[RMDB]
RNA sequence: GGGAACGACUCGAGUAGAGUCGAAAAAAGUGAGGAUAAGCCUAAAAUCAGCUCUUGGAGAAAAUGCUUAUGAAUGGAAUGACAACGAAAUGUACUUGUUCCAGUCGUCUGUGGCAUAUGCCAUGAGACAGAGUUGAUACUUCGGUAUCAACUCUGUAAAAGAAACAACAACAACAAC
Reactivity to 2A3 in 0.01 (KOAc 150mM, MgCl2 10mM, bicine 150mM(pH8.5), 24C), signal-to-noise 7, nucleotides 027 to 126: a010a000g220u170g030a120g050g000a120u110a090a120g030c040c020u150a160a120a020a120u120c030a020g020c010u000c020u070u060g070g010a080g100a070a110a040a010u070g010c040u120u060a040u210g030a050a020u030g020g030a010a040u050g050a030c000a050a000c100g120a110a090a080u210g030u060a090c070u050u070g020u010u020c000c000a020g040u040c000g020u000c090u090g090u060g010g000c020a010u060a040u300g000c000c000a000u060g010a000g010
Reactivity to DMS in 0.01 (KOAc 150mM, MgCl2 10mM, bicine 150mM(pH8.5), 24C), signal-to-noise 4, nucleotides 027 to 126: a090a020g010u000g010a060g010g000a090u020a060a100g010c030c050u000a020a080a140a040u000c060a090g000c000u020c010u000u020g000g000a080g010a050a090a090a030u040g010c030u030u040a060u010g000a050a030u010g000g000a040a030u010g020a020c130a090a070c060g010a080a090a090u040g000u000a080c300u010u010g000u000u000c010c010a020g000u020c020g000u010c170u000g010u010g000g020c010a070u020a060u050g000c000c000a010u000g000a060g000